[RMDB]
Description
Conditions: 150 mM KOAc, 10 mM MgCl2 and 150 mM bicine (pH 8.5), 24 C. An RNA of 177 nucleotides, treated with DMS and 2A3 and read out base by base. For DMS the reverse transcriptase was MarathonRT. The data come from the RNA Mapping Database (RMDB), library OK2TST. 2A3 adducts were read by reverse transcription with SuperScript II with manganese. For DMS, 8,788 sequencing reads were counted.
RNA sequence: GGGAACGACUCGAGUAGAGUCGAAAAGCCUGGAUGAAGGGGGCUACUACAUCUCCCCCCGGAUCACCUUCCCCUCGCUCCAGGCCCUGGUGCAGCACUAUUCUAGUAAGAGGGGGCGUGCAAUGGGAAAGAUACGUCUAUUCGUAGACGUAUCUUUAAAAGAAACAACAACAACAAC
Reactivity to DMS in 0.01 (KOAc 150mM, MgCl2 10mM, bicine 150mM(pH8.5), 24C), signal-to-noise 6, nucleotides 027 to 126: g010c010c010u000g010g010a050u010g010a130a080g000g000g010g010g020c240u000a070c110u000a130c250a070u010c050u000c040c010c000c010c000c000g000g010a160u000c080a110c200c170u000u010c020c000c000c020u000c090g010c130u000c010c010a020g010g000c010c030c010u000g000g010u000g000c030a090g000c050a060c040u000a080u010u000c050u000a130g010u000a090a090g010a050g010g020g000g010g010c150g000u000g010c030a050a120u000g000g000g000
Reactivity to 2A3 in 0.01 (KOAc 150mM, MgCl2 10mM, bicine 150mM(pH8.5), 24C), signal-to-noise 2, nucleotides 027 to 126: g000c000c000u010g040g000a040u040g080a060a030g040g020g010g000g000c050u130a090c030u060a030c070a130u060c070u060c040c000c010c000c010c000g010g010a020u090c030a030c020c020u110u140c000c000c000c000u000c040g060c000u020c000c000a020g010g000c020c010c000u030g010g000u040g030c030a040g000c010a030c030u060a140u150u040c020u060a080g030u080a180a000g020a020g020g020g000g010g000c030g050u040g000c010a040a100u070g000g040g000